[RMDB]
Conditions: 150 mM KOAc, 10 mM MgCl2 and 150 mM bicine (pH 8.5), 24 C. This 207-nucleotide RNA was probed chemically with DMS. It was measured as part of the RMDB library OK3TST. The DMS profile rests on 2,969 reads.
RNA sequence: GGGAACGACUCGAGUAGAGUCGAAAACUGCAUGAGGCAUGACAGCAGCUGUGCCAUUGAUGCCCCAGAAUAGAAUCACUGAGGCUUCUCUCCAGCAGCUCCUCAAUGGUGUCGCUGUCUCUCCCCCCAGUGAUCCCCCCAGGGGUGCCCGAUGCCAGCCGAUAAUAAAUUUCGAUUUAUUAUCGGCAAAAGAAACAACAACAACAAC
Reactivity to DMS in 0.01 (KOAc 150mM, MgCl2 10mM, bicine 150mM(pH8.5), 24C), signal-to-noise 2, nucleotides 027 to 156: c030u010g000c060a140u010g000a140g000g020c030a090u000g020a150c060a110g040c030a080g030c060u010g040u010g040c050c060a110u020u000g030a110u000g020c030c020c000c000a120g000a080a230u010a130g000a160a200u000c070a050c000u000g020a020g030g000c050u000u000c040u000c030u010c050c020a250g000c020a070g010c040u000c020c010u010c090a090a120u000g000g020u000g040u020c060g020c010u010g000u000c020u000c050u000c010c030c010c030c020c000a050g020u000g000a090u000c090c010c000c040c050c000a210g040g030g020g020u000g020c030c000c030g010a170u000g000c040c060a220